[RMDB]
Overview:
This 177-nucleotide RNA was probed chemically with 2A3. Conditions: 150 mM KOAc, 10 mM MgCl2 and 150 mM bicine (pH 8.5), 24 C. For 2A3, 835 sequencing reads were counted.
RNA sequence: GGGAACGACUCGAGUAGAGUCGAAAAAUCGCGCGUAGCAACGACCAGGCAUUACUGUCUUCAAAGACAAAACCGCUGGCGAUACCGUCCGCCAGAUUUUCCAGCGAACUGUCGGAGACCGUAUCGGCUGGGCAGUAGCAUUCGUGCUACUGCCCAGAAAAGAAACAACAACAACAAC
Reactivity to 2A3 in 0.01 (KOAc 150mM, MgCl2 10mM, bicine 150mM(pH8.5), 24C), signal-to-noise 2, nucleotides 027 to 126: a000u170c080g010c030g000c020g140u120a060g020c040a060a010c000g080a030c040c030a070g150g000c020a020u020u120a110c090u040g000u010c020u080u100c040a180a190a050g000a000c030a000a050a000a030c010c020g000c020u020g010g000c000g000a000u090a060c020c000g050u080c030c050g000c000c000a030g010a050u050u000u020u000c030c000a010g030c040g060a090a000c040u040g000u000c000g000g050a050g020a040c000c000g060u100a120u130c050g010g020
Source: RMDB library OK1LIB, as collected in RNAgym.